Structure probing data (2A3 and DMS) for a 177-nucleotide construct. For DMS the reverse transcriptase was MarathonRT.
RNA sequence: GGGAACGACUCGAGUAGAGUCGAAAAGAGUCAGGGUUGAAUAGGUUUUGCCAUCAAUAGUCAUCGUGGCGUCGGUGUCGGGUUGAUAAACACCGGAGAUAAUCUUGAUCAGUGUGGAUUUGCCGCAGAAGGAUAAUACUUUCGAGUAUUAUCCUUCAAAAGAAACAACAACAACAAC
Reactivity to 2A3 in 0.01 (KOAc 150mM, MgCl2 10mM, bicine 150mM(pH8.5), 24C), signal-to-noise 6, nucleotides 027 to 126: g060a010g030u020c020a010g040g020g020u040u050g060a080a050u090a100g030g020u000u100u100u110g040c020c020a030u040c030a060a070u050a100g060u040c020a030u030c070g050u030g060g030c040g040u080c010g010g010u010g010u020c030g080g110g020u060u070g050a090u080a060a040a010c040a020c010c010g020g010a040g000a020u130a060a030u030c000u050u060g030a050u070c050a070g040u020g020u040g090g020a070u080u040u160g070c010c010g000c020a040
Reactivity to DMS in 0.01 (KOAc 150mM, MgCl2 10mM, bicine 150mM(pH8.5), 24C), signal-to-noise 9, nucleotides 027 to 126: g010a130g010u000c030a040g000g000g020u010u010g010a070a080u010a090g010g010u000u000u000u010g010c090c060a040u000c080a060a060u000a090g010u000c070a040u000c080g010u000g010g010c090g020u000c060g010g010u000g010u000c050g000g010g010u000u010g010a080u000a060a070a050c070a050c020c020g010g000a070g010a080u000a040a050u000c040u000u000g000a090u000c060a090g010u000g010u000g010g010a170u000u000u000g010c020c030g020c160a110

It was measured as part of the RMDB library OK2TST.
The DMS profile rests on 24,501 reads.
The reactions ran in a buffer of 150 mM KOAc, 10 mM MgCl2 and 150 mM bicine (pH 8.5), at 24 C.